Structure probing data (DMS and 2A3) for a 177-nucleotide construct. Values cover nucleotides 27 to 126. For DMS the reverse transcriptase was MarathonRT. The RNA was probed in 150 mM KOAc, 10 mM MgCl2 and 150 mM bicine (pH 8.5) at 24 C. The data come from the RNA Mapping Database (RMDB), library OK2TST. As a SHAPE reagent, 2A3 marks flexible, mostly unpaired nucleotides at the ribose 2'-OH.

RNA sequence: GGGAACGACUCGAGUAGAGUCGAAAAAGCAGUCGCUCCCACAGAUUGUGGGCGUAUUGCUGGCGUCGAUCCGCGACUCGCCGCUCAUUGCGGAGAAGGUCUGCUACGCUCUGGCGCAGCUGGCGGCUCUUGUCGAUAUGUUCGCAUAUCGACAAGAAAAAGAAACAACAACAACAAC
Reactivity to DMS in 0.01 (KOAc 150mM, MgCl2 10mM, bicine 150mM(pH8.5), 24C), signal-to-noise 5, nucleotides 027 to 126: a040g000c030a010g020u000c030g030c140u010c020c000c000a050c060a140g000a180u020u010g020u000g010g010g010c110g010u010a020u000u000g010c000u000g000g020c110g010u000c060g010a110u000c030c040g020c030g000a070c060u000c070g010c010c000g010c020u000c240a140u010u000g010c010g000g000a050g000a110a120g010g010u000c050u000g000c020u000a040c060g000c040u000c190u000g020g010c020g020c050a040g010c040u000g010g000c000g010g000c090
Reactivity to 2A3 in 0.01 (KOAc 150mM, MgCl2 10mM, bicine 150mM(pH8.5), 24C), signal-to-noise 4, nucleotides 027 to 126: a020g050c020a000g010u020c020g020c080u080c020c160c000a010c010a010g300a280u300u300g000u030g010g000g000c020g040u100a050u020u110g000c010u010g050g030c000g060u050c020g020a050u000c020c010g040c010g040a020c020u020c090g020c020c010g030c010u040c050a190u050u210g010c010g030g010a040g040a090a060g110g020u040c110u150g000c010u050a030c060g030c020u030c090u190g080g010c010g000c010a000g010c030u070g030g010c000g000g010c010